[RMDB]
RNA sequence: GGGAACGACUCGAGUAGAGUCGAAAAGCGUCCCAAUGGGGAGACCGACUGAAUAUCGCUGCAGUCAAUGGUGUCUCGUCGGUCGUGCUGGCCGGCGAGACGGAUGCCGUGACGGAGCUGAUGCAGCCCCCAGUAUGCUUUUCGAAGCAUACUGGGGAAAAGAAACAACAACAACAAC
Reactivity to DMS in 0.01 (KOAc 150mM, MgCl2 10mM, bicine 150mM(pH8.5), 24C), signal-to-noise 2, nucleotides 027 to 126: g000c190g010u000c010c010c000a150a110u010g020g030g010g020a080g020a070c090c080g000a110c040u010g000a110a080u000a080u000c020g010c020u000g020c070a060g000u000c010a050a040u010g020g030u000g000u000c000u000c010g020u000c000g020g000u000c000g010u000g030c240u010g000g000c000c010g010g010c000g000a000g000a000c000g000g020a090u010g000c010c000g020u010g010a030c020g020g000a080g000c020u000g020a070u000g010c000a040g000c050
Reactivity to 2A3 in 0.01 (KOAc 150mM, MgCl2 10mM, bicine 150mM(pH8.5), 24C), signal-to-noise 2, nucleotides 027 to 126: g050c030g070u020c030c020c000a000a160u150g000g000g030g000a050g030a050c000c050g080a080c060u080g050a170a070u110a020u100c040g000c080u040g010c020a050g010u000c040a030a100u120g040g020u180g000u050c000u000c000g010u000c000g020g000u020c020g050u120g230c230u240g020g000c010c000g000g000c010g010a000g000a000c000g000g030a010u100g000c000c000g000u000g010a000c020g040g090a000g000c100u120g030a040u040g040c010a040g030c010
Notes
Conditions: 150 mM KOAc, 10 mM MgCl2 and 150 mM bicine (pH 8.5), 24 C. This 177-nucleotide RNA was probed chemically with DMS and 2A3. For 2A3 the reverse transcriptase was SuperScript II with manganese. DMS adducts were read by reverse transcription with MarathonRT. Reactivities are given for positions 27 through 126. For DMS, 2,282 sequencing reads were counted. 2A3 is a SHAPE reagent: it acylates the 2'-hydroxyl of flexible nucleotides of all four kinds. The data come from the RNA Mapping Database (RMDB), library OK2TST.